[RMDB]
RNA sequence: GGGAACGACUCGAGUAGAGUCGAAAAGUAGUGGGGCAGAGUUUCACUAUGUUGCCCAUGCUGGUCUUGAACUGAGCUCAAUGAUCCUCCCACCUCACCUUAUCAAGUAACUGGGACUACAGACACGAGAGUUCAGUUUAUUCGUAAACUGAACUCUAAAAGAAACAACAACAACAAC
Reactivity to 2A3 in 0.01 (KOAc 150mM, MgCl2 10mM, bicine 150mM(pH8.5), 24C), signal-to-noise 3, nucleotides 027 to 126: g090u080a000g080u040g030g000g030g000c060a050g040a050g290u030u050u080c030a030c030u040a050u070g100u050u140g050c000c010c020a000u060g040c000u060g000g020u040c020u050u100g040a090a050c030u060g030a040g020c010u000c040a050a150u140g020a040u040c000c000u000c000c030c000a020c000c010u010c010a080c000c020u050u090a120u210c050a090a050g050u020a060a040c030u020g050g000g030a010c020u090a060c040a020g060a020c050a000c130g100
Reactivity to DMS in 0.01 (KOAc 150mM, MgCl2 10mM, bicine 150mM(pH8.5), 24C), signal-to-noise 5, nucleotides 027 to 126: g010u010a030g020u000g010g020g000g020c070a150g010a120g020u000u010u010c040a040c040u010a030u000g000u010u010g010c040c000c010a100u000g020c050u000g020g000u000c030u000u000g010a080a080c080u010g010a120g020c070u000c050a050a070u010g000a060u000c040c040u010c010c010c020a110c060c030u010c070a040c070c020u000u000a110u010c100a060a060g020u000a060a070c090u000g010g010g000a070c050u000a050c060a080g000a100c140a070c160g010

Source information:
An RNA of 177 nucleotides, treated with 2A3 and DMS and read out base by base. The RNA was probed in 150 mM KOAc, 10 mM MgCl2 and 150 mM bicine (pH 8.5) at 24 C. Source: RMDB library OK2TRN, as collected in RNAgym. For 2A3, 3,391 sequencing reads were counted. Reactivities are rounded to 0.1 and cut off at 0 and 3.